[RMDB]
RNA sequence: GGGAACGACUCGAGUAGAGUCGAAAAGAUAUGGAGGUCUAAGGGCUUGGAUUUAGUUGAACAGGCAAACGUAUCGGAAACGAUACGCUAGCCUGUUCAACUUGUCAGCCUAUGACCUCCUAAGUCAGCAUCAAUCUAUCUUCGGAUAGAUUGAUGCAAAAGAAACAACAACAACAAC
Reactivity to DMS in 0.01 (KOAc 150mM, MgCl2 10mM, bicine 150mM(pH8.5), 24C), signal-to-noise 1, nucleotides 027 to 126: g040a050u030a300u000g040g020a000g030g020u000c010u020a070a230g030g000g000c000u000u020g060g020a000u000u040u000a010g010u000u000g030a000a000c000a020g000g040c000a120a130a100c000g000u000a050u010c000g000g030a140a190a220c000g000a020u000a000c000g010c000u000a300g010c000c000u000g010u010u000c000a000a000c000u010u010g010u000c000a070g000c000c000u010a300u000g000a000c000c000u010c000c000u000a010a060g000u000c030a250